[RMDB]
RNA sequence: GGGAACGACUCGAGUAGAGUCGAAAACGUCAUGCCUUCGGGCAUGACGAAAUCCCAGGUACCGACUCUCUCUCUCUCUCUCUCUCUAAGGUACCAAGAGAAAAAUCCGCAUCUUCGGAUGCGGAAACAAGAGAAGAGUCUUCGGACUCUUCUCUUGAAAAGAAACAACAACAACAAC
Reactivity to DMS in 0.01 (KOAc 150mM, MgCl2 10mM, bicine 150mM(pH8.5), 24C), signal-to-noise 1, nucleotides 027 to 126: c010g020u000c000a010u000g000c000c000u000u010c220g010g020g010c000a020u000g000a010c010g000a000a070a120u010c010c000c000a090g010g020u010a020c070c040g000a030c080u000c020u000c010u000c000u000c000u000c000u010c030u010c040u000c080u000c010u010c030u000a140a070g000g010u000a040c010c030a100a130g000a100g000a020a070a070a080a120u000c000c000g000c000a010u000c000u000u040c160g020g000a000u000g010c000g000g000a000a010a040